[RMDB]
RNA sequence: GGGAACGACUCGAGUAGAGUCGAAAAGUGGGUCCCUCAUCUCUCCUCCCCACGCUUGGCCAGGUCCCCACCUCCCGGGAGUGCGUGGGCUUUGAGGCUGUGCAGGAAGUGCCGGUGGGGCUGGUGCAUGUAUAUGAGUAUUCGUACUCAUAUACAUAAAAGAAACAACAACAACAAC
Reactivity to DMS in 0.01 (KOAc 150mM, MgCl2 10mM, bicine 150mM(pH8.5), 24C), signal-to-noise 9, nucleotides 027 to 126: g020u000g010g010g000u000c040c010c020u000c060a080u000c070u000c050u000c020c030u000c070c010c000c010a050c070g010c060u000u010g010g000c000c010a040g010g000u010c010c000c010c010a040c020c020u000c030c010c020g010g010g010a160g020u000g010c030g020u000g010g010g010c180u000u000u010g010a100g010g010c110u000g010u000g010c050a070g010g010a130a110g010u000g010c040c080g010g020u000g010g010g010g010c020u000g000g010u000g020c160
Reactivity to 2A3 in 0.01 (KOAc 150mM, MgCl2 10mM, bicine 150mM(pH8.5), 24C), signal-to-noise 6, nucleotides 027 to 126: g100u090g010g030g040u080c020c060c020u030c050a130u030c020u010c010u010c010c000u020c000c000c010c000a010c010g030c040u070u120g070g000c010c010a030g050g080u200c000c010c000c000a010c000c010u020c000c010c010g040g030g000a080g030u070g010c000g010u040g020g010g000c010u120u080u110g030a020g030g000c030u070g020u050g040c020a020g030g080a140a050g070u050g120c030c020g030g000u010g000g000g000g000c010u010g000g000u040g060c030